[RMDB]
RNA sequence: GGGAACGACUCGAGUAGAGUCGAAAACACGUGAAAUAAUCAGAGGAAUCGUUUGAAAUCAUCGUAGUAAUCGCGCGAAAAUCACGUGAAAUAAUCAGAGGAAUCGUUUGAAAUCAUCGUAGUAAUCCAUAAGUCGUGUUUUCGAACACGACUUAUGAAAAGAAACAACAACAACAAC
Reactivity to 2A3 in 0.01 (KOAc 150mM, MgCl2 10mM, bicine 150mM(pH8.5), 24C), signal-to-noise 6, nucleotides 027 to 126: c020a000c010g030u040g030a050a040a050u250a030a060u130c050a040g010a010g100g060a040a070u050c060g060u000u100u120g090a090a080a030u150c040a010u040c020g010u010a070g010u050a090a090u060c050g000c010g020c020g090a060a010a040a060u100c010a010c030g000u010g010a010a020a000u140a010a020u070c070a010g020a020g100g060a050a060u030c050g090u030u040u130g030a020a010a030u100c030a000u040c040g000u020a060g020u020a060a050u020c030
Reactivity to DMS in 0.01 (KOAc 150mM, MgCl2 10mM, bicine 150mM(pH8.5), 24C), signal-to-noise 5, nucleotides 027 to 126: c030a040c030g010u000g010a020a080a060u030a120a110u030c030a080g010a030g000g000a080a100u010c030g010u000u000u010g000a050a070a100u010c100a030u030c070g020u000a060g000u000a080a120u010c060g010c110g000c110g010a060a060a120a110u030c030a020c030g010u000g010a030a080a090u040a060a070u010c050a040g010a030g000g020a080a060u000c020g010u000u000u000g000a050a080a110u020c050a050u010c070g000u010a050g000u010a070a100u030c090